[RMDB]
RNA sequence: GGGAACGACUCGAGUAGAGUCGAAAAGAUCAACAGCUUGCACCACGUGCCUGGAAAAGCUGCAGACACUCAAUGCCAGCCUGUAAAAGCAGCCAGGAGAGGGGCUCUACCCUGCAAACCCACAGGGGAUUAGCGGCUAUUUCGAUAGCCGCUAAUCAAAAGAAACAACAACAACAAC
Reactivity to 2A3 in 0.01 (KOAc 150mM, MgCl2 10mM, bicine 150mM(pH8.5), 24C), signal-to-noise 4, nucleotides 027 to 126: g040a120u150c070a020a040c010a030g020c010u050u090g020c040a040c080c000a050c070g090u100g030c000c030u030g060g000a040a100a020a070g030c040u040g010c030a000g020a030c030a020c050u100c070a090a050u100g050c030c020a020g030c010c000u090g020u120a040a110a070a000g020c020a010g000c000c000a010g010g020a020g060a020g030g050g030g000c010u020c020u040a090c000c000c000u000g010c040a130a100a160c000c010c000a010c010a010g040g000g000
Reactivity to DMS in 0.01 (KOAc 150mM, MgCl2 10mM, bicine 150mM(pH8.5), 24C), signal-to-noise 2, nucleotides 027 to 126: g000a130u000c030a080a020c100a110g020c070u000u000g000c070a050c030c000a100c060g030u070g000c030c040u020g010g010a070a060a100a000g010c030u000g000c060a070g000a130c080a040c050u010c100a060a120u050g010c060c020a060g000c030c020u000g000u020a030a040a070a070g000c030a100g000c030c000a090g030g000a120g000a100g020g010g000g050c040u000c020u020a140c000c000c000u000g000c020a020a000a040c000c000c000a130c010a030g000g000g000
This 177-nucleotide RNA was probed chemically with 2A3 and DMS. For DMS, 2,153 sequencing reads were counted. Values cover nucleotides 27 to 126. The RNA was probed in 150 mM KOAc, 10 mM MgCl2 and 150 mM bicine (pH 8.5) at 24 C. For 2A3 the reverse transcriptase was SuperScript II with manganese.